[RMDB]
RNA sequence: GGGAACGACUCGAGUAGAGUCGAAAACUGGCUAAUCGAGCCGGCGUGAAGGGAACAUCGGGUAUGCGGAAGAACGAACUGAUCGCUGCGAUUGAGGAGAUCAGGCGACAGGCCAACGGCGCCCCAGCAUCAUUUGGGAGUUCGCUCCCAAAUGAUGAAAAGAAACAACAACAACAAC
Reactivity to DMS in 0.01 (KOAc 150mM, MgCl2 10mM, bicine 150mM(pH8.5), 24C), signal-to-noise 5, nucleotides 027 to 126: c060u000g010g020c030u020a110a100u010c140g010a080g020c030c010g010g010c050g020u000g010a120a070g000g020g000a070a090c120a080u010c110g020g010g020u000a040u000g030c080g000g020a100a080g010a080a080c130g000a100a210c020u000g000a090u000c010g010c020u000g020c140g010a040u000u000g010a170g000g010a150g010a020u010c020a300g000g010c010g000a030c050a040g000g010c060c030a050a090c090g010g000c020g010c020c010c020c040a110g020
Reactivity to 2A3 in 0.01 (KOAc 150mM, MgCl2 10mM, bicine 150mM(pH8.5), 24C), signal-to-noise 3, nucleotides 027 to 126: c010u020g040g000c030u050a050a150u210c090g110a050g020c010c000g020g010c050g030u110g020a080a060g010g000g040a080a040c020a090u070c040g000g040g000u120a090u150g030c010g040g020a050a040g000a110a020c070g020a030a040c010u030g070a240u040c010g020c040u030g050c160g070a060u040u120g070a100g150g120a040g020a030u010c000a010g000g040c000g010a020c000a030g050g000c010c000a070a040c020g020g000c010g050c010c000c010c010a020g040
Conditions: 150 mM KOAc, 10 mM MgCl2 and 150 mM bicine (pH 8.5), 24 C. Chemical mapping of a 177-nucleotide RNA with DMS and 2A3. For DMS, 3,946 sequencing reads were counted. High 2A3 reactivity points to a flexible backbone, as in loops and unpaired stretches. The data come from the RNA Mapping Database (RMDB), library OK2TRN.